[RMDB]
RNA sequence: GGGAACGACUCGAGUAGAGUCGAAAAUUCUGGAGGUGCAUCUGAGAGUGAGAGAGGUGUGAAAGUGUGCAAGCAUGAAGAAAAUGUUGGUUUUUUCCGUACAGACAACACUGAGUAUUGCGCUCCUUUCGAACUGGGUGAAAGGCCCCAAUAUGAGCGUGCUAGUACUAUUCGUAGUACUAGCACGAAAAGAAACAACAACAACAAC
Reactivity to 2A3 in 0.01 (KOAc 150mM, MgCl2 10mM, bicine 150mM(pH8.5), 24C), signal-to-noise 3, nucleotides 027 to 156: u100u050c050u040g030g010a060g000g000u020g020c020a050u030c060u040g080a070g010a000g070u020g020a010g010a020g000a000g020g040u050g000u030g120a070a060a020g060u050g000u020g050c010a020a040g020c030a030u080g060a060a070g050a060a090a030a070u050g030u070u030g070g060u070u050u010u000u080u030c060c010g040u040a060c040a080g070a030c010a060a000c040a030c070u040g020a010g100u050a090u080u120g010c030g010c010u020c010c010u040u060u010c020g010a050a040c040u030g050g010g000u040g040a080a040a000g040g010c000c000c000c000a030a030u110a120u200g040a070g060
Reactivity to DMS in 0.01 (KOAc 150mM, MgCl2 10mM, bicine 150mM(pH8.5), 24C), signal-to-noise 3, nucleotides 027 to 156: u000u000c040u000g020g010a050g010g010u010g010c040a110u000c030u000g010a130g000a120g040u050g030a090g020a090g020a040g070g030u000g000u000g000a100a120a140g030u000g020u000g020c020a170a220g000c030a060u010g020a020a080g000a050a100a060a110u000g030u000u000g020g000u000u010u000u000u000u000c010c030g050u000a130c060a060g010a170c050a050a050c040a050c020u000g010a190g040u000a100u000u000g000c010g030c010u000c020c060u000u010u000c000g010a060a160c050u010g000g010g030u000g010a030a020a090g000g010c130c010c000c020a050a000u000a070u000g000a150g000